[RMDB]
RNA sequence: GGGAACGACUCGAGUAGAGUCGAAAAACGGAUAGAUUCGUCUAUCCGUGCAUCUCAUAACAGACAGAGAAAGUCUGCUAAGAUGUCACUUAGAUAAAGAGAAGAGAGUCGAGUUCGCUCGACUCAAUGAACAUCAUUGCUUCGGCAAUGAUGUUCAAAAAGAAACAACAACAACAAC
Reactivity to 2A3 in 0.01 (KOAc 150mM, MgCl2 10mM, bicine 150mM(pH8.5), 24C), signal-to-noise 2, nucleotides 027 to 126: a000c000g020g000a000u000a010g040a020u040u030c180g050u040c040u010a010u000c000c000g000u000g000c000a010u010c000u030c050a010u040a050a060c000a000g030a000c000a000g180a020g110a300a110a020g030u000c020u010g000c030u020a030a000g020a040u030g040u090c030a020c150u030u140a040g000a140u160a240a140a010g110a060g040a100a060g120a000g020a000g030u020c000g000a000g000u040u110c200g050c050u000c000g000a000c000u010c000a000a020
Reactivity to DMS in 0.01 (KOAc 150mM, MgCl2 10mM, bicine 150mM(pH8.5), 24C), signal-to-noise 2, nucleotides 027 to 126: a040c000g000g000a030u000a000g000a050u000u000c170g040u020c000u000a000u000c000c000g000u000g010c050a020u000c000u010c150a130u000a020a080c010a000g020a000c000a090g010a300g000a160a130a070g000u000c000u020g010c020u000a050a000g000a050u000g000u010c140a060c070u000u000a060g040a160u030a040a030a070g000a190g000a050a090g000a100g000a020g010u000c000g000a010g010u000u010c180g000c010u000c000g010a030c000u000c000a000a030

An RNA of 177 nucleotides, treated with 2A3 and DMS and read out base by base. DMS (dimethyl sulfate) methylates the pairing face of unpaired adenines and cytosines. The RNA was probed in 150 mM KOAc, 10 mM MgCl2 and 150 mM bicine (pH 8.5) at 24 C.